About this RNA: This 177-nucleotide RNA was probed chemically with DMS. It was measured as part of the RMDB library OK2TST. The RNA was probed in 150 mM KOAc, 10 mM MgCl2 and 150 mM bicine (pH 8.5) at 24 C. High DMS reactivity at an A or C suggests that its Watson-Crick edge is free. Values cover nucleotides 27 to 126. The DMS profile rests on 1,464 reads.

RNA sequence: GGGAACGACUCGAGUAGAGUCGAAAAUUCGGGGCGUUGGUUCGUGAGGCUUUGGCGGAUGCCAUCACCGAUGGAAACGCGGCUGUUUUUGAGUUCUAGAACGCCGAUGGCGAUGCCGUUGAGGUAGGUCUCUCUCAGCAUUCGUGCUGAGAGAGACAAAAGAAACAACAACAACAAC
Reactivity to DMS in 0.01 (KOAc 150mM, MgCl2 10mM, bicine 150mM(pH8.5), 24C), signal-to-noise 1, nucleotides 027 to 126: u000u010c020g030g010g010g030c120g040u000u000g000g000u010u000c090g010u010g000a140g020g010c020u000u010u000g000g040c030g000g010a100u000g030c050c000a020u010c020a180c080c020g000a070u020g020g020a040a040a100c070g010c060g010g000c070u000g000u000u060u000u000u010g020a150g000u010u010c050u000a120g000a060a040c050g000c050c040g020a080u000g000g000c050g030a160u010g010c030c030g010u000u000g000a110g000g020u000a060g000